An RNA of 177 nucleotides, treated with DMS and 2A3 and read out base by base.
The RNA was probed in 150 mM KOAc, 10 mM MgCl2 and 150 mM bicine (pH 8.5) at 24 C.

[RMDB]
RNA sequence: GGGAACGACUCGAGUAGAGUCGAAAAUUGGGUGGUCCAGCAGUGAGGGCUUGCCCCAAUUGGAAAGACCCCCAGAUCGGCAAAAGGGGAGGACUCCAAAGGGGGGGCAAUUCCCCACAUUGCGCUGAGUACUGACUAGUUUCGACUAGUCAGUACUAAAAGAAACAACAACAACAAC
Reactivity to DMS in 0.01 (KOAc 150mM, MgCl2 10mM, bicine 150mM(pH8.5), 24C), signal-to-noise 6, nucleotides 027 to 126: u000u020g010g000g010u000g000g000u010c030c030a130g020c010a020g000u010g000a220g010g000g000c300u000u010g000c000c000c000c000a100a070u000u000g020g000a030a040a170g000a290c060c010c000c000c020a110g010a100u010c120g000g000c180a080a070a190a170g020g000g000g000a080g010g000a210c090u000c000c000a030a010a130g020g020g050g010g000g000g000c000a000a010u000u020c240c000c000c010a060c010a060u000u000g000c050g020c130u010g020
Reactivity to 2A3 in 0.01 (KOAc 150mM, MgCl2 10mM, bicine 150mM(pH8.5), 24C), signal-to-noise 8, nucleotides 027 to 126: u110u040g070g020g000u100g030g040u050c010c000a010g020c020a020g030u030g030a170g000g000g010c020u010u030g020c000c000c000c000a040a110u000u000g000g030a040a080a020g130a060c000c000c000c000c010a040g040a220u230c130g190g000c140a060a130a160a180g020g010g000g000a100g030g050a050c020u000c010c000a030a030a050g180g020g020g000g000g010g000c010a010a020u110u210c010c000c010c000a020c010a020u060u120g010c050g000c070u060g030
DMS adducts were read by reverse transcription with MarathonRT.